The record gives the reactivity of an RNA of 207 nucleotides to DMS and 2A3. Source: RMDB library OK3TST, as collected in RNAgym. For 2A3 the reverse transcriptase was SuperScript II with manganese. The DMS profile rests on 2,159 reads. The RNA was probed in 150 mM KOAc, 10 mM MgCl2 and 150 mM bicine (pH 8.5) at 24 C. DMS adducts were read by reverse transcription with MarathonRT. For 2A3, 1,293 sequencing reads were counted.
RNA sequence: GGGAACGACUCGAGUAGAGUCGAAAAGAGGAAACAGCAAGUGCAAAGGCUUGGAGGUGGGAGUAUGAUGGAGGCACACAGCAAGAGGGCUGGUCCAGAGAUGAUAACUACAUGUAGGGUGUCUUCUCCUCACCAGACUGCAAGGAAACUGACCUGAAUACUAUACCCUCUUCGGAGGGUAUAGUAUAAAAGAAACAACAACAACAAC
Reactivity to DMS in 0.01 (KOAc 150mM, MgCl2 10mM, bicine 150mM(pH8.5), 24C), signal-to-noise 1, nucleotides 027 to 156: g030a090g000g010a060a090a060c100a060g020c020a040a170g070u000g030c020a070a110a100g010g000c040u000u000g000g050a060g000g020u030g010g010g020a050g010u000a080u000g020a170u020g030g020a130g000g040c060a120c030a050c020a160g000c050a060a150g010a200g030g020g040c010u000g000g030u010c050c060a050g010a080g030a070u010g010a040u000a050a080c060u000a050c050a080u020g000u010a180g010g010g020u000g050u000c000u000u000c030u000c000c040u020c040a080c000c000a060g000a100c000u000g010c060a020a090g020g010a050a090a150c080u020g010a070c020c010u000g000a130
Reactivity to 2A3 in 0.01 (KOAc 150mM, MgCl2 10mM, bicine 150mM(pH8.5), 24C), signal-to-noise 2, nucleotides 027 to 156: g010a010g010g050a090a000a010c030a030g000c020a050a070g030u020g100c000a040a090a040g070g000c030u060u060g060g010a030g000g080u050g010g020g010a050g040u140a030u140g070a030u040g040g010a010g000g010c010a000c010a000c000a030g060c030a070a020g050a060g060g000g040c020u030g000g010u030c050c070a000g000a000g000a030u090g000a020u100a150a040c030u090a050c090a110u180g090u210a080g040g000g030u020g000u000c000u000u020c010u000c000c000u050c020a000c000c000a020g030a040c010u050g010c000a020a070g050g020a030a110a040c050u060g030a050c010c020u000g040a020